[RMDB]
RNA sequence: GGGAACGACUCGAGUAGAGUCGAAAAGAUAUGGAUUCGAAUGAGGCAGCUUGGACCGUUACUCGGAAACGAGUAACGCUAGCUGCUCACGAAUCCUAAGUCAAAGAUGAGCCUUCGGGCUCAUCAACAACACACGAAACUUCGGUUUCGUGUGUUGAAAAGAAACAACAACAACAAC
Reactivity to DMS in 0.01 (KOAc 150mM, MgCl2 10mM, bicine 150mM(pH8.5), 24C), signal-to-noise 2, nucleotides 027 to 126: g000a060u000a270u000g000g000a010u010u000c000g050a190a180u000g010a090g030g030c010a000g000c000u010u010g020g000a070c300c000g000u000u000a000c000u000c010g050g000a050a050a170c020g000a010g020u010a020a000c000g010c020u000a000g050c030u000g010c000u000c020a050c000g010a000a000u010c000c000u000a000a080g000u000c020a120a210a180g020a000u000g000a010g020c000c000u000u000c300g030g010g000c000u010c000a000u000c000a070a130
Reactivity to 2A3 in 0.01 (KOAc 150mM, MgCl2 10mM, bicine 150mM(pH8.5), 24C), signal-to-noise 2, nucleotides 027 to 126: g010a000u080a020u200g000g000a000u010u020c050g040a300a300u230g020a240g190g240c000a000g020c050u280u300g030g090a140c100c040g040u000u000a010c010u020c000g020g030a010a040a040c000g000a010g000u000a010a000c020g000c020u000a000g000c000u000g000c010u020c000a000c000g000a000a000u010c010c000u020a090a000g020u010c060a200a000a050g010a000u010g010a010g000c040c000u050u140c300g050g010g000c010u010c000a000u000c010a010a020

Structure probing data (DMS and 2A3) for a 177-nucleotide construct. It was measured as part of the RMDB library TTRDES. For DMS, 1,597 sequencing reads were counted. The reactions ran in a buffer of 150 mM KOAc, 10 mM MgCl2 and 150 mM bicine (pH 8.5), at 24 C. For DMS the reverse transcriptase was MarathonRT. For 2A3, 2,970 sequencing reads were counted.